[RMDB]
RNA sequence: GGGAACGACUCGAGUAGAGUCGAAAACAGCGCGAGCCUGUAGUCCCAACUACUCGGAAGGCUGAGGUGGGAGGAUCCCUUGAGAUGGGGAAAUCAAGGCUGCAGUGAGCCAUGAUAGUUCCACUGCUCUGCACGAUAUUUUCGAAUAUCGUGCAGAAAAAGAAACAACAACAACAAC
Reactivity to 2A3 in 0.01 (KOAc 150mM, MgCl2 10mM, bicine 150mM(pH8.5), 24C), signal-to-noise 2, nucleotides 027 to 126: c000a000g020c060g030c040g100a050g040c010c050u030g020u050a010g060u040c000c000c000a030a070c030u090a040c000u000c040g030g060a070a050g080g000c010u030g020a030g000g090u060g010g010g020a060g030g070a090u030c020c010c000u040u110g150a140g000a120u190g000g020g000g020a010a060a030u080c060a070a070g020g010c020u020g000c030a070g030u030g130a010g010c020c000a030u080g030a070u070a030g100u080u000c050c010a040c010u050g030c010
Reactivity to DMS in 0.01 (KOAc 150mM, MgCl2 10mM, bicine 150mM(pH8.5), 24C), signal-to-noise 4, nucleotides 027 to 126: c060a040g010c090g000c050g000a130g020c100c020u000g000u000a110g030u010c020c010c040a100a150c130u000a050c030u000c060g010g000a110a080g010g010c050u010g010a080g010g030u000g000g000g020a050g000g000a090u000c000c020c010u000u010g010a080g010a150u000g010g000g010g000a060a120a070u000c060a060a070g010g010c080u000g020c040a090g000u020g010a040g000c020c010a110u000g010a080u000a070g010u000u000c040c020a040c040u000g010c100
Overview: The data come from the RNA Mapping Database (RMDB), library OK2TRN. The record gives the reactivity of an RNA of 177 nucleotides to 2A3 and DMS. The RNA was probed in 150 mM KOAc, 10 mM MgCl2 and 150 mM bicine (pH 8.5) at 24 C. For 2A3 the reverse transcriptase was SuperScript II with manganese. For DMS the reverse transcriptase was MarathonRT. DMS (dimethyl sulfate) methylates the pairing face of unpaired adenines and cytosines.